[RMDB]
RNA sequence: GGGAACGACUCGAGUAGAGUCGAAAAAGCCUCGGGGCAACCGCCAGAGCUUACGAACAUUCGACAGUAAUGCCGAACGUGGUGGGGUUCCCGUAUAAGGCUCACAUUGAAAGGCCAGGAUAUAGCCCGUAUGUUGGACAUUCGUGUCCAACAUACGAAAAGAAACAACAACAACAAC
Reactivity to DMS in 0.01 (KOAc 150mM, MgCl2 10mM, bicine 150mM(pH8.5), 24C), signal-to-noise 3, nucleotides 027 to 126: a150g000c010c010u000c050g000g010g010g010c040a050a090c020c000g010c010c040a100g000a130g040c080u000u000a080c150g000a130a150c080a200u000u010c040g000a020c060a040g000u010a110a090u000g020c040c000g000a030a020c070g010u000g010g020u000g000g010g000g010u000u010c010c000c000g000u000a060u010a080a090g010g010c000u000c080a110c140a160u010u010g000a090a060a160g000g010c020c020a030g010g010a120u020a060u010a110g000c020c030
Reactivity to 2A3 in 0.01 (KOAc 150mM, MgCl2 10mM, bicine 150mM(pH8.5), 24C), signal-to-noise 3, nucleotides 027 to 126: a020g020c000c010u010c030g000g000g020g010c050a080a140c010c020g000c000c000a060g020a020g060c040u050u060a030c030g110a150a010c020a160u110u190c060g100a050c030a080g050u080a040a080u210g000c020c010g060a060a030c060g140u090g000g000u040g010g010g000g000u160u200c020c000c000g000u040a160u050a040a000g010g020c010u080c030a050c010a120u140u260g090a160a070a030g020g000c010c030a040g120g010a050u100a000u060a210g040c040c010